[RMDB]
RNA sequence: GGGAACGACUCGAGUAGAGUCGAAAACGCCGACGACGCCGGAGGUGAGCACGUCGUGAUCGCGGAACAGCCGGGUGUCGCCCCGCCGGCGCCCGCCGCUCACCACGCCGCCCACGACGGCGGUGCCGGUUAUUCCAACAUUCGUGUUGGAAUAACCAAAAGAAACAACAACAACAAC
Reactivity to DMS in 0.01 (KOAc 150mM, MgCl2 10mM, bicine 150mM(pH8.5), 24C), signal-to-noise 4, nucleotides 027 to 126: c090g020c020c030g030a090c020g000a050c030g000c090c030g010g010a120g040g030u000g000a050g020c040a260c020g010u000c150g020u000g000a060u000c180g000c010g000g000a090a060c130a070g000c300c020g000g010g030u010g010u010c060g000c050c090c060c090g000c140c000g000g010c000g010c010c000c000g020c090c070g020c010u000c010a020c020c030a300c070g000c030c030g000c000c010c030a080c150g010a150c120g000g010c010g010g000u000g000c140c100
Reactivity to 2A3 in 0.01 (KOAc 150mM, MgCl2 10mM, bicine 150mM(pH8.5), 24C), signal-to-noise 3, nucleotides 027 to 126: c020g030c020c010g030a040c020g020a000c010g060c070c040g110g050a120g100g000u020g010a020g020c010a010c040g020u030c000g000u030g050a130u190c080g010c010g030g030a110a090c040a050g090c030c020g080g010g060u060g040u060c030g040c020c050c000c020g080c070c000g000g020c000g030c000c000c000g010c020c040g010c000u000c010a010c000c000a000c000g000c010c030g020c010c020c010a200c100g140a040c040g000g000c010g010g000u020g040c040c020
Chemical mapping of a 177-nucleotide RNA with DMS and 2A3. For DMS the reverse transcriptase was MarathonRT. The reactions ran in a buffer of 150 mM KOAc, 10 mM MgCl2 and 150 mM bicine (pH 8.5), at 24 C. The data come from the RNA Mapping Database (RMDB), library OK2TRN. The 2A3 profile rests on 6,035 reads. 2A3 adducts were read by reverse transcription with SuperScript II with manganese.